[RMDB]
Record summary
Structure probing data (DMS and 2A3) for a 207-nucleotide construct. DMS adducts were read by reverse transcription with MarathonRT. The RNA was probed in 150 mM KOAc, 10 mM MgCl2 and 150 mM bicine (pH 8.5) at 24 C. For 2A3, 11,001 sequencing reads were counted.
RNA sequence: GGGAACGACUCGAGUAGAGUCGAAAAAUGACUUGCUUUCGAGCAAGUCAUCAAAUAGAUAUAAGUUAAUUGGUAAACUGGAUGUCUUCCAAACAUUGAAUGCGAGUUCGAUUCUCGCUAUCUAUACCACUGGGACGGUAUCGUUCGCGAUACCGUCAUCGACACUAUUUUUCGAAAUAGUGUCGAUAAAAGAAACAACAACAACAAC
Reactivity to DMS in 0.01 (KOAc 150mM, MgCl2 10mM, bicine 150mM(pH8.5), 24C), signal-to-noise 5, nucleotides 027 to 156: a020u000g000a020c000u000u010g050c000u000u000u010c260g030a050g030c010a020a010g010u000c000a000u010c010a050a080a070u000a020g010a050u000a010u000a040a040g000u000u000a010a040u000u010g020g040u000a010a020a020c020u000g010g000a030u000g020u000c020u050u000c300c260a130a070a020c000a030u000u000g000a010a070u000g000c010g010a030g000u000u000c000g000a300u000u000c000u000c000g010c000u000a010u000c000u000a020u000a220c020c020a050c080u000g010g000g020a010c020g020g000u020a010u000c010g000u000u000c150g020c030g020a020u000a000c010c000g030u010c000
Reactivity to 2A3 in 0.01 (KOAc 150mM, MgCl2 10mM, bicine 150mM(pH8.5), 24C), signal-to-noise 8, nucleotides 027 to 156: a000u010g000a000c000u000u010g000c010u100u070u150c270g030a000g000c000a000a000g010u000c000a000u000c000a000a010a000u020a000g000a010u000a000u010a020a010g000u010u020a030a040u150u190g090g110u200a020a010a010c020u020g090g010a000u000g010u040c060u260u060c150c080a020a060a010c010a010u030u060g080a050a010u020g000c000g000a000g000u000u010c000g010a000u010u000c000u000c000g000c000u000a000u000c000u000a010u010a060c020c060a060c150u160g090g060g010a000c000g000g000u010a000u000c010g000u040u060c260g000c020g100a000u000a000c000c000g000u000c000